RNA sequence: GGGAACGACUCGAGUAGAGUCGAAAAGAAAUACUCCCAAGAAGUUCCCGGAGGGAUCCAAGAGACGGACGACUUUCCCCUAUUGGUUGGGAAAAGUCCCGGAACCAGGAAAUGGGAAAGAGACGGUAAAGAAUGUGCUUCGGCACAUUCAAAAGAAACAACAACAACAAC
Reactivity to 2A3 in 0.01 (KOAc 150mM, MgCl2 10mM, bicine 150mM(pH8.5), 24C), signal-to-noise 4, nucleotides 027 to 129: g050a010a080a010u120a080c030u010c010c000c000a000a030g070a010a000g020u030u050c010c010c010g010g010a030g000g070g000a060u020c030c020a090a030g050a000g020a060c060g030g000a020c030g020a030c030u030u000u010c030c000c000c000u050a180u110u200g140g000u080u120g000g030g010a020a080a030a020g030u000c000c000c000g020g020a010a020c030c010a000g030g010a030a060a080u110g040g000g030a000a060a010g050a010g000a010c030g020g060u130a040a010a040
Reactivity to DMS in 0.01 (KOAc 150mM, MgCl2 10mM, bicine 150mM(pH8.5), 24C), signal-to-noise 7, nucleotides 027 to 129: g020a100a100a080u080a090c110u010c010c020c030a140a120g030a080a140g020u000u000c040c010c040g060g030a080g020g010g010a050u030c060c030a120a120g020a120g030a160c120g060g020a080c120g030a060c020u000u040u000c020c000c030c120u030a120u080u050g020g040u010u030g010g000g000a000a040a050a090g050u030c030c060c050g000g000a090a060c090c050a000g020g000a080a100a040u050g030g010g000a040a070a020g030a090g030a020c090g000g000u090a090a100a140